[RMDB]
RNA sequence: GGGAACGACUCGAGUAGAGUCGAAAAGUCCUGCCAUGAGACCGCAACGAGAGCAUGUCGCAUCGAAUGAACUCGGGGAGUCGGCAGCUUGCCCCACGGAUGAGCGCCUAAUGCCGGCAUUCGGGAAAAUAGACUGGAUAGUUCGCUAUCCAGUCAACACGAUGUUGUACUUCGGUACAACAUCGUGAAAAGAAACAACAACAACAAC
Reactivity to 2A3 in 0.01 (KOAc 150mM, MgCl2 10mM, bicine 150mM(pH8.5), 24C), signal-to-noise 2, nucleotides 027 to 156: g020u030c000c000u010g040c010c010a140u200g020a050g060a090c030c030g060c110a070a000c080g030a000g020a020g060c010a090u110g080u170c010g000c090a130u150c150g120a050a050u060g020a000a040c010u010c020g000g000g000g000a140g040u030c010g000g010c010a010g010c000u060u090g000c000c020c010c030a030c010g000g010a080u060g010a030g100c050g040c060c110u130a160a030u120g030c040c000g040g020c010a000u030u070c010g010g010g130a040a100a000a040u140a080g000a000c000u000g030g000a000u000a000g020u050u040c190g020c100u000a000u000c000c000a000g000u010c000a000a000
Chemical mapping of a 207-nucleotide RNA with 2A3.
It was measured as part of the RMDB library M2RFPK.
The reactions ran in a buffer of 150 mM KOAc, 10 mM MgCl2 and 150 mM bicine (pH 8.5), at 24 C.
The 2A3 profile rests on 886 reads.